[RMDB]
RNA sequence: GGGAACGACUCGAGUAGAGUCGAAAAGCUGUCAACUUCGGUUGACAGCAAAAAAUCCUAAGUCAGCAUCGAUCGUAUACCCAAUGAUGUAUCGGAAACGAUAUUGAGGAUACGGGAGCUGAUAUGGAAAAAAGAUCCAAACUUCGGUUUGGAUCAACAAUUAGCACACGUUCGCGUGUGCUAAUUGAAAAGAAACAACAACAACAAC
Reactivity to DMS in 0.01 (KOAc 150mM, MgCl2 10mM, bicine 150mM(pH8.5), 24C), signal-to-noise 1, nucleotides 027 to 156: g000c010u000g000u000c020a000a020c000u000u000c300g050g050u000u000g010a040c010a000g020c000a000a000a050a120a020a070u010c030c000u000a060a280g020u000c000a020g000c000a130u000c100g030a070u000c000g000u000a040u000a020c010c000c000a020a120u010g000a220u000g010u000a050u010c010g040g000a150a100a240c030g040a000u000a050u000u030g000a050g030g000a020u000a020c030g010g000g000a160g020c040u010g030a050u000a150u000g000g000a000a130a060a100a110a170g020a020u000c000c000a000a040a000c000u000u000c300g080g000u000u000u000g020g000a000u000c000a030a090
Reactivity to 2A3 in 0.01 (KOAc 150mM, MgCl2 10mM, bicine 150mM(pH8.5), 24C), signal-to-noise 2, nucleotides 027 to 156: g000c000u000g010u010c000a010a000c000u020u090c140g020g000u000u000g010a010c000a000g010c020a000a000a000a000a000a000u060c060c000u090a200a010g020u000c010a010g020c040a200u110c060g140a090u020c000g050u060a080u180a300c010c020c040a100a120u300g050a090u190g070u110a020u020c010g060g080a100a050a060c020g000a010u010a030u050u130g050a160g030g000a000u000a000c020g020g040g000a020g000c000u010g000a020u010a040u040g050g030a040a040a000a000a000a120g020a020u010c010c000a000a000a000c010u040u050c240g120g010u010u010u000g000g010a000u000c000a000a000
Source information: Chemical mapping of a 207-nucleotide RNA with DMS and 2A3. The 2A3 profile rests on 1,259 reads. High 2A3 reactivity points to a flexible backbone, as in loops and unpaired stretches. The DMS profile rests on 2,813 reads. It was measured as part of the RMDB library RNAMAK. Values cover nucleotides 27 to 156.